RNA sequence: GGGAACGACUCGAGUAGAGUCGAAAAGAAAAGAAAAAGAUCGUAGAUACGUUGAUGUAUUUUCAGUGUUUGGGCAUCAGGAAAGCGCUGAGAUAGUGAUGCAACCGACUACGUAAAAGAAAGAAAAAUUACCAGGACUAUUCGUAGUCCUGGUAAUAAAAGAAACAACAACAACAAC
Reactivity to 2A3 in 0.01 (KOAc 150mM, MgCl2 10mM, bicine 150mM(pH8.5), 24C), signal-to-noise 5, nucleotides 027 to 126: g070a010a020a000a010g160a010a140a020a020a000g100a040u110c000g010u010a000g010a050u170a160c030g010u010u020g010a020u070g050u090a070u020u050u050u000c000a000g010u000g080u030u090u080g110g040g040c090a130u060c060a130g020g200a060a050a010g030c010g000c020u000g010a000g000a020u030a030g160u200g150a080u280g060c000a020a000c040c010g050a030c000u000a020c000g010u030a060a020a040a020g050a020a090a010g140a010a050a020a010
Reactivity to DMS in 0.01 (KOAc 150mM, MgCl2 10mM, bicine 150mM(pH8.5), 24C), signal-to-noise 7, nucleotides 027 to 126: g020a100a070a100a150g020a070a080a080a090a080g010a100u030c010g000u000a010g000a060u050a300c300g000u000u010g010a040u000g000u010a020u010u010u030u010c010a010g000u010g010u010u000u010g010g020g030c140a090u030c250a110g010g000a080a040a030g000c020g010c010u010g000a020g010a010u000a030g020u030g020a050u050g000c020a010a020c010c030g010a200c010u000a000c000g010u040a040a050a090a070g010a090a060a090g010a030a060a080a100
An RNA of 177 nucleotides, treated with 2A3 and DMS and read out base by base. For 2A3, 5,706 sequencing reads were counted. For DMS the reverse transcriptase was MarathonRT.